[RMDB]
RNA sequence: GGGAACGACUCGAGUAGAGUCGAAAAAAUGCAGUGCAUUGCACUUGAUUGCACAACUCCUCGUCAGCGUUAGGGAACGGACUGCAUUGCUCGGGGCGAACAUCGUUCUCCUCGCGGUUCCGUAGUCUAAGGUGUCCAAAUUCGUUUGGACACCUUAAAAAGAAACAACAACAACAAC
Reactivity to 2A3 in 0.01 (KOAc 150mM, MgCl2 10mM, bicine 150mM(pH8.5), 24C), signal-to-noise 5, nucleotides 027 to 126: a000a000u130g010c020a020g010u010g030c040a090u100u130g020c020a030c090u090u160g090a100u110u090g020c030a020c010a070a070c010u020c000c010u030c030g120u050c050a040g010c050g100u070u110a050g020g010g030a010a050c060g020g010a010c010u020g000c000a060u020u070g020c020u010c010g010g010g010g000c030g020a010a010c020a280u140c140g020u010u000c020u010c010c000u000c000g040c050g000g000u070u000c020c020g020u020a010g030u010c040
Reactivity to DMS in 0.01 (KOAc 150mM, MgCl2 10mM, bicine 150mM(pH8.5), 24C), signal-to-noise 6, nucleotides 027 to 126: a040a040u010g000c050a050g020u010g000c020a100u020u020g010c050a070c090u020u020g010a090u020u000g010c040a060c110a130a100c090u000c030c020u010c120g030u010c050a080g010c060g010u010u010a090g000g000g000a080a060c100g000g010a030c020u000g000c010a040u000u010g010c020u000c010g000g000g000g010c040g000a030a030c060a150u010c220g010u000u000c000u000c010c000u000c000g010c120g010g010u000u000c070c020g000u020a050g020u010c050
Background: Structure probing data (2A3 and DMS) for a 177-nucleotide construct. It was measured as part of the RMDB libraries RFM100 and RFMREP. The reactions ran in a buffer of 150 mM KOAc, 10 mM MgCl2 and 150 mM bicine (pH 8.5), at 24 C.